[RMDB]
RNA sequence: GGGAACGACUCGAGUAGAGUCGAAAACAGAGUGUAUCAAACGAUUCACCCACAGCGUGUAGAUUUUUUCACGAACGAAUUAUUAUUCAUCAUCGGAUUAGAAUAAAGAGAGAGUCCCGUUCUGCAUGUCAAUGCCGACAACAAUGAAAUUUAUAGGCUAAUACAGAGUGUUCGCACUCUGUAUUAGAAAAGAAACAACAACAACAAC
Reactivity to DMS in 0.01 (KOAc 150mM, MgCl2 10mM, bicine 150mM(pH8.5), 24C), signal-to-noise 2, nucleotides 027 to 156: c040a130g000a050g010u000g000u000a070u000c030a110a130a230c120g010a090u000u000c030a040c020c020c020a110c040a100g000c030g030u000g000u010a080g010a070u000u000u000u000u000u000c030a120c010g010a070a090c050g000a040a030u000u000a090u010u000a110u010u000c000a080u000c050a140u000c080g030g020a100u010u000a080g000a090a100u000a040a080a140g010a180g000a130g000a110g000u000c020c030c040g010u010u010c020u000g000c010a060u010g010u000c040a050a120u000g010c020c030g020a100c040a040a070c020a020a070u010g000a060a030a100u000u000u000a100u000a180g010g000
Reactivity to 2A3 in 0.01 (KOAc 150mM, MgCl2 10mM, bicine 150mM(pH8.5), 24C), signal-to-noise 5, nucleotides 027 to 156: c040a010g070a030g080u050g020u060a070u110c050a120a140a130c060g020a030u080u040c020a040c000c030c000a040c050a030g020c030g020u000g010u050a050g010a170u080u120u010u090u150u200c080a070c080g030a070a000c040g010a060a020u090u040a040u120u070a050u090u120c030a060u020c010a020u060c040g110g000a010u060u090a090g040a080a040u060a080a130a010g060a000g000a000g000a010g050u000c000c020c000g020u030u020c020u030g020c030a030u030g030u100c030a040a050u070g030c010c010g040a030c030a060a010c020a080a070u080g060a130a070a010u090u210u050a180u110a050g070g000